[RMDB]
RNA sequence: GGGAACGACUCGAGUAGAGUCGAAAAGUCGUGAGACAGUUCGGUCCCUAUCCGUCGCAGGCGUAGGAAAUUUGAGAAGACCUGUCCUUAGUACGAGAGGACCGGGAUGGACGUACCUCUGGUGUACCAGUUGUCCUGCCAAGGGCAUGGCUGGGUACUCAAAAUACCUGUUCGCAGGUAUUUUGAGAAAAGAAACAACAACAACAAC
Reactivity to DMS in 0.01 (KOAc 150mM, MgCl2 10mM, bicine 150mM(pH8.5), 24C), signal-to-noise 2, nucleotides 027 to 156: g010u000c010g020u030g010a140g000a080c040a090g040u000u000c010g050g000u000c020c000c010u050a120u020c030c030g060u000c080g040c080a040g030g010c040g050u010a150g020g020a050a070a220u000u000u010g020a210g030a170a090g010a060c000c020u000g000u010c030c030u000u000a110g050u010a080c060g030a290g000a070g020g000a040c030c030g000g010g030a040u000g000g000a090c070g020u010a080c020c000u000c040u020g000g010u000g030u000a040c000c000a070g010u020u000g010u000c010c000u000g000c140c180a080a120g020g000g000c010a060u010g010g010c000u010g010g010g000u000a100
Reactivity to 2A3 in 0.01 (KOAc 150mM, MgCl2 10mM, bicine 150mM(pH8.5), 24C), signal-to-noise 3, nucleotides 027 to 156: g020u020c020g030u060g050a100g020a040c010a020g040u040u070c020g020g030u030c030c000c010u040a100u020c010c020g030u030c060g010c110a030g010g000c040g030u140a080g020g060a090a100a130u130u150u150g150a160g030a100a020g070a080c000c000u020g060u110c000c020u060u090a030g040u120a040c040g000a040g000a040g110g000a010c020c020g010g000g020a030u050g040g010a020c000g030u070a100c030c040u020c080u080g050g030u080g020u090a070c000c010a000g010u010u010g020u020c000c010u040g120c030c060a050a040g020g020g000c030a020u040g040g020c020u030g030g000g000u040a040
Chemical mapping of a 207-nucleotide RNA with DMS and 2A3.
The data come from the RNA Mapping Database (RMDB), library OK3TST.
The RNA was probed in 150 mM KOAc, 10 mM MgCl2 and 150 mM bicine (pH 8.5) at 24 C.
For DMS, 4,313 sequencing reads were counted.